[RMDB]
RNA sequence: GGGAACGACUCGAGUAGAGUCGAAAACUUAGUUGACGAGGAUGGAGGUUAUCGAAUUUCGCGGAUCCUCCCGGCUGAGUGUGCAGAUCACAGCCGUAAGAAUUUCUUCAAACCAAGGGGGUGACUCGCUAAUGCAUCAGUUCGCUGAUGCAUUAGCAAAAGAAACAACAACAACAAC
Reactivity to DMS in 0.01 (KOAc 150mM, MgCl2 10mM, bicine 150mM(pH8.5), 24C), signal-to-noise 2, nucleotides 027 to 126: c050u000u020a050g020u000u010g010a120c190g000a040g000g030a040u000g000g020a070g000g010u010u030a120u000c060g010a080a170u000u000u000c150g010c070g010g000a020u000c000c010u000c000c000c010g010g010c000u000g000a110g000u000g020u000g020c150a110g000a060u000c050a090c020a060g010c000c000g000u040a020a120g010a050a040u000u010u000c030u000u000c060a070a040a080c040c070a040a030g030g000g000g020g000u010g010a080c080u010c130
Reactivity to 2A3 in 0.01 (KOAc 150mM, MgCl2 10mM, bicine 150mM(pH8.5), 24C), signal-to-noise 1, nucleotides 027 to 126: c050u000u080a000g060u070u100g080a030c020g020a010g030g000a030u020g010g030a010g050g030u060u050a140u170c020g020a050a080u140u180u180c180g000c050g120g000a020u000c010c000u030c020c040c020g010g000c000u080g000a100g080u080g090u140g150c160a030g050a300u080c010a000c000a010g050c050c030g000u000a000a050g010a000a000u070u030u000c020u050u000c000a060a070a070c010c040a080a040g040g010g020g000g020u040g030a020c010u020c080